[RMDB]
RNA sequence: GGGAACGACUCGAGUAGAGUCGAAAAACAAGUGGUGGUAGUCCGCCACUCUAAGGGGACGCCUUUAGAAGAAGAGGCUAGGGGGUAUUCCGGUGAGGGAUACUUAGUAAUAUGCAACGCUAAUUGCUCAAGGAUAGAUGAUUCGUCAUCUAUCCAACACGCAUUGUUGGUUCGCCAACAAUGCGUGAAAAGAAACAACAACAACAAC
Reactivity to 2A3 in 0.01 (KOAc 150mM, MgCl2 10mM, bicine 150mM(pH8.5), 24C), signal-to-noise 1, nucleotides 027 to 156: a000c190a160a020g010u010g000g000u010g070g110u020a030g020u000c000c000g000c020c000a000c010u010c000u010a010a020g000g000g000g040a090c130g160c020c000u010u010u020a110g020a160a000g010a020a020g030a060g030g060c000u000a050g050g000g000g000g000u000a010u070u030c000c020g060g060u300g030a060g000g010g000a010u010a000c000u000u060a060g040u020a050a020u070a040u260g080c030a060a020c030g000c060u120a100a120u030u110g000c040u160c240a050a100g000g000a000u000a000g010a000u000g020a020u030u070c190g120u020c040a000u000c000u000a000u000c000c000a000a000
The record gives the reactivity of an RNA of 207 nucleotides to 2A3. Conditions: 150 mM KOAc, 10 mM MgCl2 and 150 mM bicine (pH 8.5), 24 C.